[RMDB]
RNA sequence: GGGAACGACUCGAGUAGAGUCGAAAAUAACAGGAGAGUAGAUGAUUCGCGUUAAGUGUGUGUGAAUGGGAUGUCGUCACACAACGAAGCGAGAGCGCGGUGAAACAUUGCAUCCGCUCCAAAACAAGACAUGGCAUUCUUUCGAGAAUGCCAUGUCAAAAGAAACAACAACAACAAC
Reactivity to DMS in 0.01 (KOAc 150mM, MgCl2 10mM, bicine 150mM(pH8.5), 24C), signal-to-noise 1, nucleotides 027 to 126: u000a080a180c200a060g010g000a040g040a050g010u000a180g010a000u000g000a050u000u000c030g020c000g000u000u000a050a040g040u020g020u000g050u000g020u000g020a050a050u000g000g000g000a020u000g000u000c220g080u000c000a010c000a020c030a030a010c050g020a070a080g050c110g000a130g000a110g030c010g020c140g000g080u000g020a050a080a100c020a070u000u000g000c000a000u000c000c020g000c030u000c000c020a050a050a100a150c260a080a130